[RMDB]
RNA sequence: GGGAACGACUCGAGUAGAGUCGAAAAACAUUAAGUUUCGACUUAAUGUAAACCCGAUGAAGCGGCACAUACGGAGGUUCAUACAUCUAAGAGUGCAAAUAAAAAGUUGAUCCUUCGGGAUCAACAAUAUCCUAUAUUCGUUCGCGAAUAUAGGAUAAAAAGAAACAACAACAACAAC
Reactivity to 2A3 in 0.01 (KOAc 150mM, MgCl2 10mM, bicine 150mM(pH8.5), 24C), signal-to-noise 4, nucleotides 027 to 126: a010c000a000u000u000a010a010g020u000u030u170c160g070a010c000u000u010a000a000u000g010u010a060a030a030c010c000c010g000a110u180g060a040a040g150c160g060g000c060a010c000a040u230a060c070g050g000a010g000g020u070u160c060a050u080a290c020a060u030c030u040a060a040g050a020g100u050g020c040a010a120a000u120a020a100a010a000a010g000u000u000g000a000u010c000c010u020u040c220g090g010g000a010u010c000a000a000c000a000a000
Reactivity to DMS in 0.01 (KOAc 150mM, MgCl2 10mM, bicine 150mM(pH8.5), 24C), signal-to-noise 5, nucleotides 027 to 126: a010c000a010u000u000a000a000g010u000u000u030c180g020a030c000u000u000a010a000u000g000u000a030a100a110c000c000c010g020a130u020g000a110a130g020c170g010g000c020a030c020a060u010a080c110g000g010a040g010g010u000u000c230a130u000a070c030a040u000c020u010a150a140g000a080g020u010g000c040a070a060a090u010a060a070a060a100a070g000u000u000g000a000u000c010c000u000u010c230g020g010g010a010u000c000a000a000c000a050a090